[RMDB]
RNA sequence: GGGAACGACUCGAGUAGAGUCGAAAACGGCAAGGUACGACCGCACGGCAUGGGGUGAGAUAGAGCGCUGGCGUACAUGCCGCAGAUGUCGUAGACGUACAAGGGCUCGUCCAGCACUCCCAGGUAAGAGGGGUAGCAUCGCCCUCCUUUAACGGAGGCACCCUACUACCUUCGGGUAGUAGGGUGCAAAAGAAACAACAACAACAAC
Reactivity to 2A3 in 0.01 (KOAc 150mM, MgCl2 10mM, bicine 150mM(pH8.5), 24C), signal-to-noise 2, nucleotides 027 to 156: c060g010g000c040a080a120g030g000u040a030c040g000a110c010c040g080c070a030c020g040g070c040a040u040g000g000g050g010u090g020a100g000a050u180a130g010a060g070c150g050c110u000g050g010c010g030u020a020c040a060u140g010c040c010g000c020a040g020a100u160g000u050c020g030u060a080g020a100c020g030u120a090c070a040a110g030g020g000c000u000c030g040u010c010c000a040g050c000a000c070u130c010c020c000a000g010g050u090a150a010g030a140g020g020g000g000u030a010g000c060a050u030c030g050c010c020c000u000c010c010u090u200u100a090a040c100g020g010a040g000